An RNA of 177 nucleotides, treated with 2A3 and DMS and read out base by base.
For 2A3 the reverse transcriptase was SuperScript II with manganese.

RNA sequence: GGGAACGACUCGAGUAGAGUCGAAAAGAUAUGGAGCACGCUAGCUCUCUGUCGGAAACGACAGGUGAGCUUGGACCGUGUCUCCUAAGUCAAAACACUGGGUCUUCCUUCGGGAAGACCCAGUGAACUAGUACUGUAAGUUCGCUUACAGUACUAGAAAAGAAACAACAACAACAAC
Reactivity to 2A3 in 0.01 (KOAc 150mM, MgCl2 10mM, bicine 150mM(pH8.5), 24C), signal-to-noise 3, nucleotides 027 to 126: g030a010u070a030u170g000g000a000g010c000a010c010g030c030u010a000g000c000u010c000u000c010u000g010u000c000g010g020a090a050a010c030g010a010c020a020g070g160u120g030a000g010c010u060u070g050g050a050c110c070g000u010g020u040c010u000c000c010u010a070a010g050u040c050a080a030a050a080c030a010c010u020g030g020g020u010c010u000u020c020c000u070u160c300g060g010g000a010a010g000a000c060c000c000a000g000u000g000a000a000
Reactivity to DMS in 0.01 (KOAc 150mM, MgCl2 10mM, bicine 150mM(pH8.5), 24C), signal-to-noise 7, nucleotides 027 to 126: g010a050u010a300u000g000g010a020g020c010a010c010g020c020u000a010g010c000u000c000u010c000u000g000u010c000g000g010a090a090a200c000g010a010c000a010g000g010u000g010a000g010c000u000u010g030g000a110c300c030g020u000g000u010c010u000c000c000u000a020a080g010u000c030a100a090a110a220c000a010c000u000g010g000g000u000c000u000u000c000c000u000u020c200g020g000g010a010a010g010a000c000c000c000a000g000u000g000a030a100